[RMDB]
RNA sequence: GGGAACGACUCGAGUAGAGUCGAAAAUCGUUUAUGAGCUACAUGAACGAAGUGCAUACUGACCUACAGUAUGCAGAUGCCUUCUGUAGGUCAGAGGGCAGAGCUAAUCUGUAGCUCAGAUUAGCGAGGACAGCUAUAUAUUCGUAUAUAGCUGUCCAAAAGAAACAACAACAACAAC
Reactivity to DMS in 0.01 (KOAc 150mM, MgCl2 10mM, bicine 150mM(pH8.5), 24C), signal-to-noise 9, nucleotides 027 to 126: u000c010g010u000u000u000a070u010g000a110g020c100u000a080c010a010u010g010a020a050c070g010a090a160g010u000g010c020a050u000a080c010u000g000a100c070c050u010a130c000a010g010u000a020u000g010c010a070g010a100u010g010c010c040u000u000c000u000g000u000a090g010g010u000c000a010g010a060g000g010g010c030a040g010a170g010c050u010a050a040u000c010u000g000u000a090g000c140u000c000a000g000a060u000u000a010g010c010g000a110
Reactivity to 2A3 in 0.01 (KOAc 150mM, MgCl2 10mM, bicine 150mM(pH8.5), 24C), signal-to-noise 9, nucleotides 027 to 126: u030c000g000u010u010u020a040u020g020a040g080c060u100a050c050a030u120g010a090a030c050g060a150a050g120u030g040c010a030u050a140c000u010g060a110c000c040u050a070c020a000g040u070a010u020g000c000a000g050a080u160g010c010c000u010u010c000u020g090u100a090g060g220u080c010a000g000a010g010g020g000c030a030g020a010g040c010u020a040a020u000c000u010g040u060a010g000c020u010c040a000g000a010u030u040a000g010c020g020a050
This 177-nucleotide RNA was probed chemically with DMS and 2A3. DMS adducts were read by reverse transcription with MarathonRT. Reactivities are given for positions 27 through 126. The data come from the RNA Mapping Database (RMDB), library OK2TRN. For DMS, 47,874 sequencing reads were counted. The reactions ran in a buffer of 150 mM KOAc, 10 mM MgCl2 and 150 mM bicine (pH 8.5), at 24 C.